[RMDB]
Structure probing data (2A3 and DMS) for a 207-nucleotide construct. For DMS, 1,726 sequencing reads were counted. It was measured as part of the RMDB library OK3TST. The reactions ran in a buffer of 150 mM KOAc, 10 mM MgCl2 and 150 mM bicine (pH 8.5), at 24 C. The 2A3 profile rests on 2,028 reads. For 2A3 the reverse transcriptase was SuperScript II with manganese.
RNA sequence: GGGAACGACUCGAGUAGAGUCGAAAACUUCAACUAGAACAAUGGAUUGCAGUGAUUCAUUGCAGAAGCAGAUAUGAGAAUAUAGUUAACUUUUUAAAAGCUAUACAUUAAACAGAUUUGCAAAAAGGUAGAACAGGGUUACUCUUCUCAUUAAUAACCAUUAAAAUCGAUUCGUCGAUUUUAAUGGAAAAGAAACAACAACAACAAC
Reactivity to 2A3 in 0.01 (KOAc 150mM, MgCl2 10mM, bicine 150mM(pH8.5), 24C), signal-to-noise 3, nucleotides 027 to 156: c020u120u100c050a070a050c070u110a060g020a190a040c010a050a010u020g000g010a000u010u150g060c160a070g060u050g130a040u000u030c020a020u030u040g030c060a030g020a110a010g020c040a020g020a120u110a040u090g010a010g020a050a020u110a020u060a080g000u090u080a080a040c050u160u130u060u100u220a080a200a010a000g000c000u030a010u030a120c030a090u200u140a080a070a000c000a000g130a180u070u070u130g000c000a000a000a060a140a060g010g020u040a040g020a080a020c030a040g030g000g020u010u030a040c010u010c000u090u000c010u000c010a010u040u100a020a070u080a110a060
Reactivity to DMS in 0.01 (KOAc 150mM, MgCl2 10mM, bicine 150mM(pH8.5), 24C), signal-to-noise 1, nucleotides 027 to 156: c070u000u010c040a120a150c050u050a190g020a110a090c000a000a030u010g000g000a010u010u000g070c020a300g000u000g000a040u010u000c010a030u000u000g020c010a100g020a150a130g030c020a020g020a110u020a070u000g020a120g010a110a100u010a080u000a030g010u040u000a040a030c060u000u000u000u010u070a020a100a070a180g020c000u000a070u000a060c020a080u010u000a080a080a160c020a110g010a070u000u000u000g000c000a050a120a010a080a150g010g000u000a110g010a020a060c040a090g000g020g010u000u000a150c060u020c080u010u000c000u020c000a110u000u000a070a110u020a050a230